[RMDB]
RNA sequence: GGGAACGACUCGAGUAGAGUCGAAAAGAUAUGGAAGCCAAUGUACGAGAUAUAUUGUCAGAUCCCUGGAUCGGAAACGAUCCAGCGAUCUUGGAUUUAUAUAUUAAGUACAUUGGCUUCCUAAGUCCAUGGCAAUCUAGUUCGCUAGAUUGCCAUGAAAAGAAACAACAACAACAAC
Reactivity to DMS in 0.01 (KOAc 150mM, MgCl2 10mM, bicine 150mM(pH8.5), 24C), signal-to-noise 1, nucleotides 027 to 126: g000a130u020a300u010g000g010a000a030g020c000c000a010a040u000g000u000a020c010g000a300g010a010u000a010u010a000u000u000g010u000c000a010g000a020u000c010c110c010u000g000g020a010u000c000g000g000a170a070a220c010g010a000u000c000c010a010g040c300g000a000u000c000u020u000g020g000a020u000u010u000a010u000a010u000a010u000u000a010a300g010u000a000c000a010u000u000g000g000c000u010u000c000c010u000a010a090g010u000c040
Structure probing data (DMS) for a 177-nucleotide construct. DMS adducts were read by reverse transcription with MarathonRT. Reactivities are given for positions 27 through 126. The DMS profile rests on 1,021 reads. It was measured as part of the RMDB library TTRINS.